[RMDB]
RNA sequence: GGGAACGACUCGAGUAGAGUCGAAAACAUAUGGCCUCCUUCCAUCUUCAAUACUAGUAAUUGCUGGUUGGGUCCUUCUCAUAUUGCAUCACCUCAACCUCCUCUUCUGCCUCCCUCCUGCACAUUUAAGGACCCUUGUGAUUACAACAGACCCAUGGCUACUAUGACAUUUCGAUGUCAUAGUAGCAAAAGAAACAACAACAACAAC
Reactivity to 2A3 in 0.01 (KOAc 150mM, MgCl2 10mM, bicine 150mM(pH8.5), 24C), signal-to-noise 3, nucleotides 027 to 156: c030a060u130a120u100g050g000c050c020u010c010c000u060u000c010c020a080u060c030u140u030c020a060a040u060a200c060u100a040g010u020a030a100u040u060g020c010u060g050g100u120u030g020g000g010u000c000c000u080u080c030u020c070a090u120a110u060u110g030c010a050u060c030a040c020c000u070c060a040a060c010c000u040c020c000u070c000u070u040c040u090g050c010c020u050c000c010c010u050c010c030u050g000c030a080c000a090u060u070u130a030a000g000g000a010c000c000c000u010u010g000u000g000a030u020u020a000c010a070a010c020a050g050a030c000c000c080a030u150g050
Reactivity to DMS in 0.01 (KOAc 150mM, MgCl2 10mM, bicine 150mM(pH8.5), 24C), signal-to-noise 1, nucleotides 027 to 156: c090a080u000a070u010g000g020c050c020u000c010c020u000u000c020c030a050u000c030u010u000c050a100a110u010a080c060u000a170g000u000a080a080u010u000g030c040u000g000g000u000u000g010g020g000u000c020c010u000u030c090u000c050a130u000a080u000u000g020c020a180u010c030a060c020c010u030c030a050a060c010c020u000c010c020u010c000u030u000c020u010g040c030c000u000c040c010c000u000c030c050u000g000c100a100c080a030u000u000u000a060a050g020g000a040c030c000c000u010u000g010u010g010a070u000u000a060c000a060a090c050a080g000a160c010c030c010a170u000g020
An RNA of 207 nucleotides, treated with 2A3 and DMS and read out base by base. The RNA was probed in 150 mM KOAc, 10 mM MgCl2 and 150 mM bicine (pH 8.5) at 24 C. Source: RMDB library OK3TST, as collected in RNAgym. 2A3 adducts were read by reverse transcription with SuperScript II with manganese.